[RMDB]
RNA sequence: GGGAACGACUCGAGUAGAGUCGAAAAUCACACUUACCCCGACGGCUCGAAGGUGUAUGCCGGGUCUCUCUUUGAGUCCGAGUGUACAUGGCUGGUCAAUGCCUCUAACCCGGGCCACCGUCCCGGCAUGACACCAAUUCUUCGGAAUUGGUGUCAUAAAAGAAACAACAACAACAAC
Reactivity to 2A3 in 0.01 (KOAc 150mM, MgCl2 10mM, bicine 150mM(pH8.5), 24C), signal-to-noise 1, nucleotides 027 to 126: u060c000a020c000a000c020u100u150a110c020c020c000c020g100a020c030g040g000c030u010c020g060a150a050g080g030u030g000u040a040u030g010c010c010g010g020g040u000c040u020c000u020c050u100u180u190g010a000g040u020c000c020g020a060g040u050g040u020a040c070a100u060g070g000c000u060g050g110u100c060a030a090u150g030c010c010u000c040u050a070a050c000c000c000g000g010g040c030c010a060c030c030g050u050c000c010c000g070g010c010
Reactivity to DMS in 0.01 (KOAc 150mM, MgCl2 10mM, bicine 150mM(pH8.5), 24C), signal-to-noise 2, nucleotides 027 to 126: u000c100a040c070a070c050u000u000a120c100c020c020c030g000a250c090g000g010c050u000c020g000a060a060g000g010u020g000u000a080u000g000c010c010g000g000g000u000c050u000c050u000c210u000u000u000g010a080g020u020c000c020g010a060g030u000g010u000a080c110a080u010g020g010c060u000g000g000u010c220a080a110u000g010c020c010u030c110u010a100a100c080c030c070g000g010g010c030c070a030c120c050g000u000c000c000c010g020g010c090